[RMDB]
RNA sequence: GGGAACGACUCGAGUAGAGUCGAAAACUCGUAGUGGUUAUAUGCCAUUACCCGCUUUUCGUGUCUGGCCGCCCGGUCUACGCGUUCAUUUAUUUGUGUAACUGCUUUGGACAGCUGGAUCUCGGUUCGGUUGUCACGUGGUCGACGUGUCCCACCGGUAGUACACUUCCUUCGGGAAGUGUACUACAAAAGAAACAACAACAACAAC
Reactivity to 2A3 in 0.01 (KOAc 150mM, MgCl2 10mM, bicine 150mM(pH8.5), 24C), signal-to-noise 4, nucleotides 027 to 156: c020u020c020g000u010a010g010u010g100g040u150u140a290u100a060u300g020c000c000a000u000u010a010c010c000c060g070c110u040u020u010u050c040g000u010g050u020c110u150g010g060c000c000g030c040c030c040g040g050u020c120u020a000c040g000c010g060u000u110c100a070u080u150u250a180u120u210u250g030u000g010u010a040a050c040u090g030c060u120u100u230g060g000a010c010a040g030c020u020g010g000a020u020c050u030c200g060g020u020u030c010g020g020u000u030g000u020c000a010c070g020u030g010g040u030c040g000a030c030g030u030g050u000c010c000c010a060c050c070g070
Source information: Structure probing data (2A3) for a 207-nucleotide construct. Reactivities are given for positions 27 through 156. The 2A3 profile rests on 1,536 reads. The data come from the RNA Mapping Database (RMDB), library ARCHII. The reactions ran in a buffer of 150 mM KOAc, 10 mM MgCl2 and 150 mM bicine (pH 8.5), at 24 C.